RNA sequence: GGGAACGACUCGAGUAGAGUCGAAAAAGCUGGAUACGUCCAGCAACCCCGUGAACUGGGGGGAUACGGCUCCCCCUCCAGAUCCGGCGACGGCUUUUGGCCGUUGACAAAUUCAACCUAAGGAGAACAGUGUGAUGCGUUUCGACGCAUCACACUGAAAAGAAACAACAACAACAAC
Reactivity to 2A3 in 0.01 (KOAc 150mM, MgCl2 10mM, bicine 150mM(pH8.5), 24C), signal-to-noise 4, nucleotides 027 to 126: a000g000c010u000g000g010a030u060a070c130g090u030c010c000a000g000c000a020a050c000c000c000c030g070u090g050a040a020c010u000g000g000g000g000g000g040a020u060a220c050g100g000c030u000c020c000c000c000c000u010c000c000a000g010a030u000c010c010g000g060c000g010a010c000g010g090c020u120u170u190u300g240g000c000c010g000u000u010g000a020c020a000a050a010u180u140c050a090a070c020c040u270a130a070g030g010a010g050a090a050